[RMDB]
RNA sequence: GGGAACGACUCGAGUAGAGUCGAAAACAUCAUCCAAUCUGUCGAAAGCUUGAAUAAAACAAAAAGAGGAAGGGAAAAUUUGCUUCUUUUCUUCUUGAUCUAGUAUAUCAUCUUCUCCUGCCCUUGGAUGUGAGUGGGCCUUCAGACUUAAACCAGACGAUUAUGACGGGUUCGCCCGUCAUAAUCGAAAAGAAACAACAACAACAAC
Reactivity to 2A3 in 0.01 (KOAc 150mM, MgCl2 10mM, bicine 150mM(pH8.5), 24C), signal-to-noise 1, nucleotides 027 to 156: c040a040u080c000a040u040c000c000a050a020u140c040u120g030u110c060g050a090a000a000g000c050u020u030g050a050a070u200a190a050a020a050c120a000a160a070a000a010g000a000g030g000a000a000g100g030g000a000a020a080a250u230u300u280g080c030u010u020c010u010u020u000u000c000u010u000c000u030u050g000a010u060c070u060a040g120u050a060u060a010u060c040a000u000c040u040u030c030u050c030c000u060g000c010c010c000u010u020g010g000a010u000g020u000g020a070g040u080g000g020g070c010c000u090u030c040a030g060a150c000u010u170a010a030a080c030c010a020g050a090
Conditions: 150 mM KOAc, 10 mM MgCl2 and 150 mM bicine (pH 8.5), 24 C. Chemical mapping of a 207-nucleotide RNA with 2A3.